[RMDB]
RNA sequence: GGGAACGACUCGAGUAGAGUCGAAAAGUAAAGGCGGAGGACGGUUUUGGCUUGCGCUCGGUCCGCCCGCGCGUGGUGUGGGCUGGAAUUCGUGUGUGGAGGAUGAUUAAUGCCGCGCGCCCAGGAACUCGGGAACUAUAUUCGUAUAGUUCCCGAGAAAAGAAACAACAACAACAAC
Reactivity to 2A3 in 0.01 (KOAc 150mM, MgCl2 10mM, bicine 150mM(pH8.5), 24C), signal-to-noise 1, nucleotides 027 to 126: g040u020a040a110a080g030g000c010g020g050a030g100g030a070c040g030g000u010u050u050u140g030g000c040u020u040g010c010g000c010u010c020g000g040u040c010c020g020c010c020c010g000c000g020c020g070u170g170g000u090g000u070g010g040g000c050u160g050g090a050a030u230u140c040g000u040g030u010g030u030g080g090a020g020g010a020u080g000a040u090u160a140a050u140g020c010c000g050c000g000c010g000c000c000c000a050g020g060a040a020
Reactivity to DMS in 0.01 (KOAc 150mM, MgCl2 10mM, bicine 150mM(pH8.5), 24C), signal-to-noise 2, nucleotides 027 to 126: g000u010a090a090a140g010g010c020g010g020a080g020g010a090c150g000g000u000u000u010u000g010g010c030u000u010g010c050g010c040u000c010g020g000u000c010c030g020c020c010c010g000c040g020c080g010u010g000g030u010g010u000g000g000g000c040u020g030g000a090a080u010u010c050g010u010g020u010g020u000g000g010a080g000g010a100u000g000a100u000u010a100a090u010g000c010c000g000c030g010c060g000c010c060c060a120g020g000a120a130

Annotation
The record gives the reactivity of an RNA of 177 nucleotides to 2A3 and DMS. Conditions: 150 mM KOAc, 10 mM MgCl2 and 150 mM bicine (pH 8.5), 24 C. DMS adducts were read by reverse transcription with MarathonRT.